[RMDB]
RNA sequence: GGGAACGACUCGAGUAGAGUCGAAAAAGCAAAACAAGCGAUCUUCCACCUUCUGACCCGGGGAGAUUUGUGGACGAUAGCGAUUUGACUCCCCACACAGACUUUACUAAUCGAUUUGUGGAUUCCGAUUUCGAUCCUGAUUCAGGAGUAGGCCGUAGAUUAUGGGUCCUUUCGAGGACCCAUAAUCAAAAGAAACAACAACAACAAC
Reactivity to 2A3 in 0.01 (KOAc 150mM, MgCl2 10mM, bicine 150mM(pH8.5), 24C), signal-to-noise 1, nucleotides 027 to 156: a000g090c070a070a020a050a190c110a210a000g070c000g060a010u000c010u000u000c040c020a020c010c020u070u030c080u080g230a210c110c000c000g000g000g020g000a070g000a050u110u170u300g020u010g010g010a000c010g010a020u030a020g050c050g020a020u020u000u080g050a050c000u020c030c020c070c000a030c000a010c010a020g140a050c000u050u110u120a080c050u190a050a080u040c050g080a140u000u020u040g090u090g110g000a080u130u030c110c000g050a050u010u010u100c080g060a090u010c000c020u080g070a270u070u180c020a010g010g020a030g030u020a060g070g000c090c010g040u070a060